[RMDB]
RNA sequence: GGGAACGACUCGAGUAGAGUCGAAAAGAUAUGGACAUCUCGGACAGCAACAGCAUGCUUCGGAAACGAAGCAUGACAUGCUGCCGACAUGAUGUCCUAAGUCAAAAGCAGUGGUUCGCCACUGCAACUACAACGUGCACUUCGGUGCACGUUGUAGAAAAGAAACAACAACAACAAC
Reactivity to DMS in 0.01 (KOAc 150mM, MgCl2 10mM, bicine 150mM(pH8.5), 24C), signal-to-noise 2, nucleotides 027 to 126: g040a050u000a300u000g000g000a000c000a000u000c010u000c000g010g000a190c050a010g000c000a070a080c300a200g030c000a000u000g000c000u000u040c010g050g010a090a070a300c000g030a030a000g000c000a000u000g000a010c120a170u000g020c020u000g000c030c000g010a020c300a070u000g000a020u000g000u000c000c000u000a020a100g000u000c100a120a070a110a150g010c010a000g000u000g000g000u000u010c240g000c000c000a030c000u000g010c010a030a010
Reactivity to 2A3 in 0.01 (KOAc 150mM, MgCl2 10mM, bicine 150mM(pH8.5), 24C), signal-to-noise 2, nucleotides 027 to 126: g010a020u080a020u130g030g010a000c020a020u000c010u000c050g110g000a260c030a010g050c000a030a120c040a180g070c010a020u020g000c000u000u000c010g020g030a040a100a010c020g000a000a000g000c000a000u000g020a000c010a040u070g020c010u010g020c000c010g000a030c070a180u180g010a000u010g000u010c010c000u000a030a010g000u020c060a030a040a070a170g000c010a000g010u010g110g030u090u240c300g090c090c000a010c000u000g000c000a010a000
Source information:
The record gives the reactivity of an RNA of 177 nucleotides to DMS and 2A3. 2A3 adducts were read by reverse transcription with SuperScript II with manganese. The DMS profile rests on 1,193 reads. Conditions: 150 mM KOAc, 10 mM MgCl2 and 150 mM bicine (pH 8.5), 24 C. The 2A3 profile rests on 3,225 reads.